[RMDB]
RNA sequence: GGGAACGACUCGAGUAGAGUCGAAAAUUCUCAGCACUCAUCAAGAAGUAGGCUUAGGACAAUUGCUUGGUGGUGAAAGUAGAGGGAAGGUAGCACUUCGACGCCUCUAAGUACGCUGUGGGAGUAGAAAACUGGACAUCGUUCGCGAUGUCCAGAACAUUCUACGUAGCUUCGGCUACGUAGAAUGAAAAGAAACAACAACAACAAC
Reactivity to DMS in 0.01 (KOAc 150mM, MgCl2 10mM, bicine 150mM(pH8.5), 24C), signal-to-noise 2, nucleotides 027 to 156: u000u000c010u000c010a180g000c040a090c040u020c040a070u000c040a130a080g020a070a060g030u000a130g040g040c050u000u000a130g050g010a100c020a070a110u010u010g000c050u000u040g020g040u010g000g000u000g010a070a090a120g040u000a050g020a120g000g020g030a110a080g030g030u010a160g000c080a190c040u030u000c040g010a060c070g010c000c020u000c020u000a050a050g000u000a070c020g030c010u010g020u000g020g000g000a180g000u000a070g000a040a080a070a150c000u000g000g000a020c000a020u000c010g000u000u000c270g040c020g020a000u010g000u000c000c010a000g000a030a070
Reactivity to 2A3 in 0.01 (KOAc 150mM, MgCl2 10mM, bicine 150mM(pH8.5), 24C), signal-to-noise 2, nucleotides 027 to 156: u030u010c020u000c010a030g020c020a020c050u130c010a050u060c060a090a040g020a110a000g090u160a060g090g000c050u080u040a070g010g080a050c080a100a260u110u120g050c030u020u000g010g010u010g010g000u070g030a100a060a010g060u060a020g020a040g000g040g010a040a040g010g030u070a040g050c030a020c080u000u060c050g090a020c070g050c010c010u000c000u050a070a020g020u030a020c040g010c060u020g010u070g060g000g000a190g020u050a030g130a020a090a010a020c010u000g010g000a000c000a000u000c000g050u100u040c090g000c020g080a000u000g010u000c010c000a000g000a000a000

Conditions: 150 mM KOAc, 10 mM MgCl2 and 150 mM bicine (pH 8.5), 24 C. This 207-nucleotide RNA was probed chemically with DMS and 2A3. It was measured as part of the RMDB library M2RFPK. For 2A3, 1,790 sequencing reads were counted. Reactivities are given for positions 27 through 156. For DMS, 3,358 sequencing reads were counted.